The data come from the RNA Mapping Database (RMDB), library OK1LIB.
The record gives the reactivity of an RNA of 177 nucleotides to 2A3 and DMS.
The DMS profile rests on 2,697 reads.
2A3 adducts were read by reverse transcription with SuperScript II with manganese.
The reactions ran in a buffer of 150 mM KOAc, 10 mM MgCl2 and 150 mM bicine (pH 8.5), at 24 C.
RNA sequence: GGGAACGACUCGAGUAGAGUCGAAAAUUUGCGUUAUAAAAGAUGUCUUCUCCAUCAAAUAUAAUAAGGCCUAGCACAGCAGGAAAUAAACCUAUUCCAUUAGACAUCGGAAAUGACAUUGUGUUAGAAGAACUUCCUGAUUCGUCAGGAAGUUCUUAAAAGAAACAACAACAACAAC
Reactivity to 2A3 in 0.01 (KOAc 150mM, MgCl2 10mM, bicine 150mM(pH8.5), 24C), signal-to-noise 4, nucleotides 027 to 126: u090u120u130g110c010g010u040u100a100u090a100a100a000a020g000a000u000g030u020c040u150u060c040u080c030c050a070u020c050a070a140a020u190a010u050a100a070u070a100a040g100g000c000c000u000a000g000c010a000c010a040g030c030a020g130g000a060a070a030u240a070a080a020c000c000u020a070u070u000c000c020a000u070u120a070g050a080c010a030u070c040g010g010a050a130a040u100g030a050c050a070u060u100g030u010g000u040u030a060g050
Reactivity to DMS in 0.01 (KOAc 150mM, MgCl2 10mM, bicine 150mM(pH8.5), 24C), signal-to-noise 2, nucleotides 027 to 126: u010u060u000g000c100g020u030u010a060u030a020a090a110a080g000a000u000g030u000c030u000u020c020u030c050c050a030u010c100a000a100a040u000a070u070a070a070u020a130a080g000g000c090c000u000a020g000c030a060c070a000g030c080a040g030g020a040a050a060u000a030a120a150c070c080u010a150u010u000c050c010a040u050u000a100g000a010c030a040u000c020g000g000a020a030a050u010g000a070c050a190u000u010g000u020g000u010u000a140g000